[RMDB]
RNA sequence: GGGAACGACUCGAGUAGAGUCGAAAACUGUCUUCCCAGGUGUAGAUCACCUAUUCUAACUUCACCUGUUUUGAUACCCUGAUGAGGAAAGUCCCAGGACUUGUCAGCUGGGAUAGGCCCCAUGACAUCACAAGGGCUCUUUCGAGAGCCCUUGUGAAAAAGAAACAACAACAACAAC
Reactivity to DMS in 0.01 (KOAc 150mM, MgCl2 10mM, bicine 150mM(pH8.5), 24C), signal-to-noise 1, nucleotides 027 to 126: c120u000g000u000c100u000u000c030c040c040a090g030g000u000g020u000a080g000a100u120c070a070c030c020u050a110u000u000c120u000a160a200c070u010u000c070a010c000c020u010g000u030u010u030u000g010a150u000a040c050c020c000u000g100a020u020g010a090g020g000a040a060a070g010u010c000c000c000a100g020g020a040c020u010u020g030u070c090a040g070c150u000g000g000g000a060u000a040g030g010c060c000c010c040a050u000g040a110c090a170
Reactivity to 2A3 in 0.01 (KOAc 150mM, MgCl2 10mM, bicine 150mM(pH8.5), 24C), signal-to-noise 2, nucleotides 027 to 126: c030u010g030u070c010u010u000c040c010c000a000g020g000u030g010u060a020g030a100u180c050a080c040c010u010a120u080u000c030u070a060a190c050u070u040c040a010c000c020u020g060u030u070u030u060g100a120u140a140c020c000c020u050g050a110u080g000a030g110g000a000a070a030g010u000c040c040c000a010g030g060a080c030u020u060g080u070c020a020g040c050u000g010g000g010a010u010a020g050g020c000c000c000c010a020u080g020a030c030a180